Chemical mapping of a 177-nucleotide RNA with 2A3 and DMS. The 2A3 profile rests on 924 reads.

[RMDB]
RNA sequence: GGGAACGACUCGAGUAGAGUCGAAAAAUUUGCGCCGAGAUCGAACGCCAGUUGCGCGGCGGCGAGCUGCUCAUGGAUGCCGCAGCAGCAUCCGAAUUACUACUCACCGUGCGGUAUCAGCUCGAUAUCAGCGUGAUAUGUUCGCAUAUCACGCUGAAAAAGAAACAACAACAACAAC
Reactivity to 2A3 in 0.01 (KOAc 150mM, MgCl2 10mM, bicine 150mM(pH8.5), 24C), signal-to-noise 1, nucleotides 027 to 126: a000u200u180u170g060c080g000c080c050g040a050g020a100u090c060g030a130a040c040g020c000c020a050g050u050u050g050c040g000c000g050g030c000g000g020c000g030a020g000c020u050g000c040u020c060a130u200g010g000a010u010g030c020c010g080c110a030g000c070a010g020c000a010u000c010c010g010a010a040u090u060a100c050u040a020c000u020c000a040c030c040g110u130g090c060g000g030u030a080u040c000a010g000c000u040c010g010a020u030a030
Reactivity to DMS in 0.01 (KOAc 150mM, MgCl2 10mM, bicine 150mM(pH8.5), 24C), signal-to-noise 2, nucleotides 027 to 126: a120u000u000u010g020c060g020c010c070g010a100g030a080u000c060g000a110a130c030g010c010c080a190g020u000u010g000c050g000c190g010g030c000g000g010c030g000a030g070c020u000g000c210u020c170a140u000g000g030a020u010g000c020c030g030c090a080g030c070a220g020c000a010u000c010c010g000a090a030u010u010a070c050u010a050c020u010c060a130c070c040g000u020g000c070g000g010u000a060u010c050a070g000c090u020c040g000a080u010a110